[RMDB]
RNA sequence: GGGAACGACUCGAGUAGAGUCGAAAAGGAAAAACUGAAAACGUUUCCACUGAGAUCUGGUGCAAGGCAAGGACAUGCACUCCUGCCACUUCUGUUCAGCGUAGUACUAGAAGUACUAGCAAGAUCAAUCAGAUAAGAAACAGAAAUAAAAGGCAUCCUUCCUUUACCAGUUCGCUGGUAAAGGAAGAAAAGAAACAACAACAACAAC
Reactivity to 2A3 in 0.01 (KOAc 150mM, MgCl2 10mM, bicine 150mM(pH8.5), 24C), signal-to-noise 4, nucleotides 027 to 156: g040g020a030a100a040a010a050c090u120g060a050a060a040a020c060g010u000u030u030c030c040a080c060u090g050a040g010a110u040c050u100g040g000u060g010c030a110a070g000g030c040a100a100g000g020a040c030a070u130g020c060a050c080u000c010c010u010g010c000c010a020c020u010u010c010u020g020u050u040c030a010g010c050g150u050a010g010u000a020c050u050a080g160a300a020g060u000a010c010u010a010g010c010a040a030g000a090u050c020a050a060u080c020a050g040a100u100a130a060g010a060a030a010c020a010g050a010a040a000u120a010a060a000a010g050g000c000a000u020c000
Reactivity to DMS in 0.01 (KOAc 150mM, MgCl2 10mM, bicine 150mM(pH8.5), 24C), signal-to-noise 1, nucleotides 027 to 156: g000g050a120a090a060a090a210c020u000g000a080a060a170a210c100g010u040u000u000c000c010a150c080u000g030a130g010a150u000c050u000g030g000u040g020c060a010a130g040g020c000a070a110g000g030a110c050a140u000g010c150a060c060u010c030c010u010g020c030c000a240c110u000u010c000u000g000u000u010c030a110g000c040g040u000a050g010u000a020c000u020a110g020a110a140g030u000a030c080u000a030g010c000a100a130g000a040u000c000a080a170u000c040a090g030a040u000a110a110g000a080a050a010c010a080g010a040a020a110u000a060a030a060a050g000g000c050a140u000c040
Chemical mapping of a 207-nucleotide RNA with 2A3 and DMS. 2A3 is a SHAPE reagent: it acylates the 2'-hydroxyl of flexible nucleotides of all four kinds. The 2A3 profile rests on 2,685 reads. For DMS the reverse transcriptase was MarathonRT. The RNA was probed in 150 mM KOAc, 10 mM MgCl2 and 150 mM bicine (pH 8.5) at 24 C.